[RMDB]
RNA sequence: GGGAACGACUCGAGUAGAGUCGAAAAACGGCCAGUCGUAAAUCAGGUAGAUGAGUCCCACUAGCGAGGUCAUUCCGCCGGCUCCGCAGACCAGUACGCCAAGAGGCCACAUGUCUAAAACACUCCCAGCAGAAUUGUUGGUACUCGGCGAUGUAGCACUUGACUAUCUGUUCGCAGAUAGUCAAGUAAAAGAAACAACAACAACAAC
Reactivity to 2A3 in 0.01 (KOAc 150mM, MgCl2 10mM, bicine 150mM(pH8.5), 24C), signal-to-noise 3, nucleotides 027 to 156: a000c040g000g000c050c000a020g060u070c010g100u120a000a070a050u160c050a050g060g070u110a050g060a170u100g060a050g070u080c010c050c010a010c070u080a030g030c010g030a060g070g050u070c020a070u110u050c020c040g000c030c020g040g010c040u020c060c020g000c000a000g040a050c000c000a040g050u090a050c020g000c020c010a030a030g030a010g050g000c060c000a000c000a030u150g050u000c030u190a100a070a060a040c040a030c050u020c020c030c000a020g010c020a000g070a190a100u100u070g100u100u070g010g000u020a040c000u000c010g000g000c000g030a020u090g070u110a050g020c020
Reactivity to DMS in 0.01 (KOAc 150mM, MgCl2 10mM, bicine 150mM(pH8.5), 24C), signal-to-noise 2, nucleotides 027 to 156: a100c040g000g030c020c030a120g000u000c070g050u010a070a070a080u000c030a060g080g040u010a140g030a070u030g020a180g040u000c010c000c040a190c080u000a100g010c040g030a090g030g020u000c040a130u000u000c020c030g010c020c060g000g040c040u000c000c030g000c020a150g000a080c050c030a130g000u010a120c050g010c010c010a090a140g000a100g000g000c000c020a020c040a040u000g000u000c020u000a020a060a050a040c020a110c060u000c010c020c010a160g100c070a080g010a100a090u000u000g020u000u010g060g000u000a060c050u000c050g020g000c000g020a120u000g030u000a080g000c100